[RMDB]
RNA sequence: GGGAACGACUCGAGUAGAGUCGAAAAGCUGCACCCUCGACGAUAUUUUCCUGUUCAGCCUCGUUGAGAUCCUGCCUGUGGGUGAUCCAGCUUUGAAGCAGGCCCUCGCGCUCCUGCGGCUCGAGCGCCAGUAGGGUACGUUCGCGUACCCUACUGGAAAAGAAACAACAACAACAAC
Reactivity to DMS in 0.01 (KOAc 150mM, MgCl2 10mM, bicine 150mM(pH8.5), 24C), signal-to-noise 4, nucleotides 027 to 126: g020c020u000g000c010a050c030c020c010u000c040g020a090c080g010a080u040a040u030u020u010u000c030c010u000g000u020u000c070a090g010c070c050u040c050g020u010u000g020a070g010a100u000c040c030u000g010c000c050u020g050u030g020g010g040u000g000a250u000c150c020a100g030c020u000u000u020g010a090a090g000c070a070g000g000c140c030c020u010c040g020c060g020c030u010c030c060u010g010c100g030g000c040u000c060g000a060g010c140g000
Reactivity to 2A3 in 0.01 (KOAc 150mM, MgCl2 10mM, bicine 150mM(pH8.5), 24C), signal-to-noise 5, nucleotides 027 to 126: g030c020u040g020c010a020c010c030c010u040c020g090a060c020g010a030u010a120u180u110u060u080c030c020u080g050u090u140c040a040g030c020c020u030c010g030u040u060g030a020g010a050u050c010c020u060g050c010c010u070g020u110g050g010g040u050g040a070u100c080c030a020g010c010u090u060u140g060a060a010g050c030a010g020g000c000c020c000u030c020g000c000g000c020u010c010c040u080g030c030g030g000c000u020c040g040a030g020c040g030
The record gives the reactivity of an RNA of 177 nucleotides to DMS and 2A3.